The record gives the reactivity of an RNA of 177 nucleotides to 2A3 and DMS. The RNA was probed in 150 mM KOAc, 10 mM MgCl2 and 150 mM bicine (pH 8.5) at 24 C. Values cover nucleotides 27 to 126. 2A3 adducts were read by reverse transcription with SuperScript II with manganese. For 2A3, 13,827 sequencing reads were counted.
RNA sequence: GGGAACGACUCGAGUAGAGUCGAAAAGCUGGCUACGAAGGCACAGGCCUGAUGAUUGAUGGAGAAGUCAUGGUUAAAGGUGUGGACUUCAACACAUCUUCCGGUCUCAUCCGAACGAAGUACGUCAACCAGCUAAUAGUUUCGACUAUUAGCUGGUAAAAGAAACAACAACAACAAC
Reactivity to 2A3 in 0.01 (KOAc 150mM, MgCl2 10mM, bicine 150mM(pH8.5), 24C), signal-to-noise 9, nucleotides 027 to 126: g050c040u030g010g010c000u030a010c060g100a100a070g040g000c060a030c050a110g020g040c010c010u030g010a030u030g020a030u070u100g090a140u060g060g020a050g000a050a010g020u020c030a080u090g120g040u200u270a100a080a060g180g060u150g060u080g120g060a050c010u060u030c050a030a010c000a000c000a010u000c000u020u000c020c030g020g000u000c010u020c020a120u030c010c020g030a080a030c060g020a100a020g040u040a040c090g020u010c040a030
Reactivity to DMS in 0.01 (KOAc 150mM, MgCl2 10mM, bicine 150mM(pH8.5), 24C), signal-to-noise 8, nucleotides 027 to 126: g000c040u000g000g000c010u010a050c080g010a100a090g020g000c060a150c210a070g010g000c010c000u000g000a050u010g000a100u020u020g020a080u000g000g010a230g000a070a030g020u010c020a080u010g000g030u020u040a070a070a060g020g010u010g010u010g000g010a080c090u010u020c130a040a170c010a010c010a020u000c000u000u000c040c050g000g000u000c020u000c240a130u020c020c030g000a100a090c130g010a050a070g020u010a070c090g010u000c100a140